RNA sequence: GGGAACGACUCGAGUAGAGUCGAAAACUAAAGGGCCGUUACAAGUAGGAGAUUCAGUUCUCUUGCAAGGCCAUUCUCUAGCUAAGAAUAUCCUGCAUGUCGUAGGCCCAGAUGCCCGCGCUAAACAAACCUCAAUUCUUCGGAAUUGAGAAAAGAAACAACAACAACAAC
Reactivity to 2A3 in 0.01 (KOAc 150mM, MgCl2 10mM, bicine 150mM(pH8.5), 24C), signal-to-noise 9, nucleotides 027 to 129: c050u090a080a040a030g010g000g000c020c010g090u110u090a030c020a070a070g050u020a020g080g020a000g010a000u060u070c030a060g300u100u010c030u010c000u020u020g030c050a080a070g020g030c010c000a010u060u000c010u000c020u030a020g020c050u070a080a010g000a020a010u010a030u060c000c010u020g020c030a040u060g030u070c030g030u040a160g000g000c000c010c000a000g010a000u050g040c000c010c000g040c030g010c060u150a120a060a020c040a050a080a060c010
Reactivity to DMS in 0.01 (KOAc 150mM, MgCl2 10mM, bicine 150mM(pH8.5), 24C), signal-to-noise 8, nucleotides 027 to 129: c140u000a020a160a060g040g020g020c000c010g000u050u020a040c040a060a120g020u030a000g020g010a040g020a000u000u000c160a120g140u000u000c040u040c000u050u030g050c010a050a030g050g000c070c040a040u030u010c020u010c040u000a090g030c040u010a080a040g020a030a020u020a070u040c010c020u020g080c010a080u040g040u020c130g020u030a170g010g010c080c020c030a060g020a070u010g000c020c030c000g070c120g030c070u070a060a090a090c150a060a070a100c140
This 170-nucleotide RNA was probed chemically with 2A3 and DMS. The data come from the RNA Mapping Database (RMDB), library 15KLIB. For 2A3 the reverse transcriptase was SuperScript II with manganese. The 2A3 profile rests on 55,092 reads. The reactions ran in a buffer of 150 mM KOAc, 10 mM MgCl2 and 150 mM bicine (pH 8.5), at 24 C. Reactivities are given for positions 27 through 129.